About this RNA: Chemical mapping of a 177-nucleotide RNA with DMS. Reactivities are given for positions 27 through 126. For DMS, 651 sequencing reads were counted.
RNA sequence: GGGAACGACUCGAGUAGAGUCGAAAAGAAAGAUAUGGACCACAGAACUACACUCCUGACAGUGACGAAGCGUUGUCGGAAACGACAACGUCGAACUGGAUGGAGUGCUGUGGUCCUAAGUCAUAAACUGCCUUAGAUCGUUCGCGAUCUAAGGCAGAAAAGAAACAACAACAACAAC
Reactivity to DMS in 0.01 (KOAc 150mM, MgCl2 10mM, bicine 150mM(pH8.5), 24C), signal-to-noise 1, nucleotides 027 to 126: g000a050a140a070g040a040u000a300u000g000g000a000c000c000a000c000a000g030a260a010c120u040a300c010a020c030u000c000c000u000g000a300c080a020g000u020g000a280c170g000a060a300g000c020g000u000u000g000u000c000g000g000a070a050a200c000g000a000c000a000a020c000g030u000c040g000a180a030c000u000g000g000a220u000g000g000a020g060u000g050c000u000g040u000g020g070u000c000c000u000a000a000g000u010c000a080u010a030a110a180